[RMDB]
RNA sequence: GGGAACGACUCGAGUAGAGUCGAAAAAUCUUGGUCACUAAGGGAAGAGGCUGAAAUUUCCUGUGAUGUGGUAAAUGAGAAGGGUGGGCCACUCUAGCCAUGUCACCCAAACCGCAGGCCCACUGAACCCCUUUUAAUCGUUCGCGAUUAAAAGGGGAAAAGAAACAACAACAACAAC
Reactivity to DMS in 0.01 (KOAc 150mM, MgCl2 10mM, bicine 150mM(pH8.5), 24C), signal-to-noise 2, nucleotides 027 to 126: a020u010c040u000u000g010g000u010c020a140c050u020a120a170g020g000g010a130a020g040a040g030g010c060u000g010a020a030a090u000u010u000c000c000u000g030u000g020a020u010g020u000g000g020u000a060a040a130u010g010a020g000a120a100g000g000g000u000g020g010g020c000c020a170c000u010c010u010a190g000c000c000a020u000g010u000c020a020c000c170c210a010a070a110c220c220g000c200a080g010g030c010c000c010a010c000u000g000a100a160
Reactivity to 2A3 in 0.01 (KOAc 150mM, MgCl2 10mM, bicine 150mM(pH8.5), 24C), signal-to-noise 2, nucleotides 027 to 126: a000u020c020u030u070g020g000u010c020a020c070u060a150a160g180g030g030a070a010g050a030g030g030c010u010g010a020a030a120u030u020u020c000c010u000g000u010g000a020u000g020u040g000g020u090a120a200a170u270g020a040g040a080a060g130g070g000u000g000g000g000c000c000a050c000u000c030u030a040g020c010c010a010u000g020u000c000a020c030c060c000a080a080a030c050c020g020c080a030g010g010c010c020c000a010c000u000g010a010a020